[RMDB]
RNA sequence: GGGAACGACUCGAGUAGAGUCGAAAAAGAUAUGGAGCAAAGGAGUCCGCCACCACGUUUGACGAGGAUCGGAAACGAUCCUCCGAGUGGUGGGCGGACGCCGGUGAAAUACUUUGCUCCUAAGUCAUCUAUUUUAGAAGUUCGCUUCUAAAAUAGAAAAAGAAACAACAACAACAAC
Reactivity to DMS in 0.01 (KOAc 150mM, MgCl2 10mM, bicine 150mM(pH8.5), 24C), signal-to-noise 7, nucleotides 027 to 126: a090g010a060u000a300u000g000g000a050g010c010a020a040a070g010g010a160g010u000c000c000g000c010c000a030c000c010a010c000g010u010u000u020g020a220c300g000a020g010g000a010u000c000g000g000a150a120a190c010g000a010u000c000c000u000c000c000g000a060g030u000g000g010u000g000g020g030c000g020g010a000c010g020c140c120g020g010u010g000a140a130a130u010a100c030u000u000u000g000c000u000c000c000u010a020a110g010u000c040a160
Reactivity to 2A3 in 0.01 (KOAc 150mM, MgCl2 10mM, bicine 150mM(pH8.5), 24C), signal-to-noise 3, nucleotides 027 to 126: a020g060a040u100a060u190g010g000a000g010c020a000a040a070g050g030a150g040u010c000c000g010c020c000a010c000c010a000c020g040u130u270u300g080a050c040g000a010g000g000a000u000c000g030g020a070a070a030c010g000a000u000c000c000u000c000c000g010a010g000u000g010g000u030g000g080g000c000g000g010a000c000g000c000c000g020g070u250g110a200a160a000u220a090c000u040u000u020g000c000u030c000c000u020a200a010g030u000c000a050